[RMDB]
RNA sequence: GGGAACGACUCGAGUAGAGUCGAAAAGAACUCACCUUCGGGUGAGUUCAAACCCGAUGAAGCCGCACUUAGACAGCUUCAUACACCUAAGAAGUGCAAUAAAAACAACGCGGUUCGCCGCGUUGAACCAUACGAACAGCUUCGGCUGUUCGUAUGGAAAAGAAACAACAACAACAAC
Reactivity to 2A3 in 0.01 (KOAc 150mM, MgCl2 10mM, bicine 150mM(pH8.5), 24C), signal-to-noise 2, nucleotides 027 to 126: g000a000a000c030u000c000a020c010c010u030u030c180g120g000g000u000g000a000g010u010u010c010a030a000a010c000c000c000g000a060u060g000a000a020g010c030c010g040c050a050c080u100u060a040g110a270c020a020g010c000u010u000c000a000u020a020c080a010c020c050u080a120a050g070a120a000g030u020g110c070a080a110u160a130a110a010a010a040c010a010a020c010g000c020g000g080u050u060c240g060c070c000g000c000g000u010u000g000a000a000
Reactivity to DMS in 0.01 (KOAc 150mM, MgCl2 10mM, bicine 150mM(pH8.5), 24C), signal-to-noise 1, nucleotides 027 to 126: g000a010a010c000u000c000a000c000c000u000u060c140g010g010g060u000g010a040g000u000u000c010a020a150a150c000c000c000g050a100u000g010a060a020g070c000c190g070c050a200c300u010u020a060g040a110c040a060g040c020u000u000c040a030u000a120c070a010c040c040u000a180a070g000a080a090g000u000g000c140a110a160u010a070a060a100a170a210c000a000a000c000g000c000g010g000u000u000c140g020c000c000g070c000g010u030u000g000a100a150
Structure probing data (2A3 and DMS) for a 177-nucleotide construct. DMS adducts were read by reverse transcription with MarathonRT. The DMS profile rests on 640 reads. The reactions ran in a buffer of 150 mM KOAc, 10 mM MgCl2 and 150 mM bicine (pH 8.5), at 24 C. 2A3 adducts were read by reverse transcription with SuperScript II with manganese.